[RMDB]
Structure probing data (2A3) for a 177-nucleotide construct.
RNA sequence: GGGAACGACUCGAGUAGAGUCGAAAAAUGCGGACCUCAUGAUCGGCGGUCGGCCGGAGGCGAGGCAUGGUUGCGCACCAAUCCUGGGACUGUUGGUGCGGAUCGGCCAAUUCUGCACCGGCAGAGCGUACCGCGGUCCAUUCGUGGACCGCGGUACAAAAGAAACAACAACAACAAC
Reactivity to 2A3 in 0.01 (KOAc 150mM, MgCl2 10mM, bicine 150mM(pH8.5), 24C), signal-to-noise 1, nucleotides 027 to 126: a000u170g050c060g000g000a080c010c010u000c050a080u220g100a120u150c020g110g000c100g090g080u000c140g030g000c010c000g000g020a050g000g100c040g000a000g040g010c110a080u070g000g000u000u080g240c000g000c000a000c000c000a010a010u080c030c080u060g000g050g110a110c090u120g010u010u000g000g000u000g000c010g000g000a000u000c000g020g000c020c000a020a110u180u150c090u180g000c020a000c040c000g000g000c040a000g020a020g060c110
For 2A3 the reverse transcriptase was SuperScript II with manganese.